[RMDB]
RNA sequence: GGGAACGACUCGAGUAGAGUCGAAAAGAGAUCUCGAUCACUCGUGAGUACACGUUCACGAACACUCGUGUACUCGUGUACGAACGAUCACGUUCUCGUGAGUGUGUGUGUGUUCGUGAACUCGAUCACACGAACGAUCUCGAACGAACACACGUACUCAUUAUCGGCCCUUCGGGGCCGAUAAUGAAAAAGAAACAACAACAACAAC
Reactivity to 2A3 in 0.01 (KOAc 150mM, MgCl2 10mM, bicine 150mM(pH8.5), 24C), signal-to-noise 1, nucleotides 027 to 156: g060a020g000a000u160c100u160c120g150a170u070c020a000c050u060c020g040u060g020a010g000u060a000c050a000c040g010u050u020c020a090c050g090a170a130c040a030c070u010c000g000u000g060u060a010c050u030c060g020u080g000u210a040c080g000a020a030c120g000a040u090c010a050c100g000u000u060c050u050c000g040u040g030a050g010u030g040u000g000u030g000u000g000u050g000u000u000c000g000u000g060a020a020c020u010c070g050a010u030c020a040c000a000c120g050a130a000c010g010a010u000c020u000c020g000a070a010c000g050a070a000c000a020c040a090c160g010u300a030c000
Chemical mapping of a 207-nucleotide RNA with 2A3. It was measured as part of the RMDB library OK3TST. 2A3 adducts were read by reverse transcription with SuperScript II with manganese. The reactions ran in a buffer of 150 mM KOAc, 10 mM MgCl2 and 150 mM bicine (pH 8.5), at 24 C.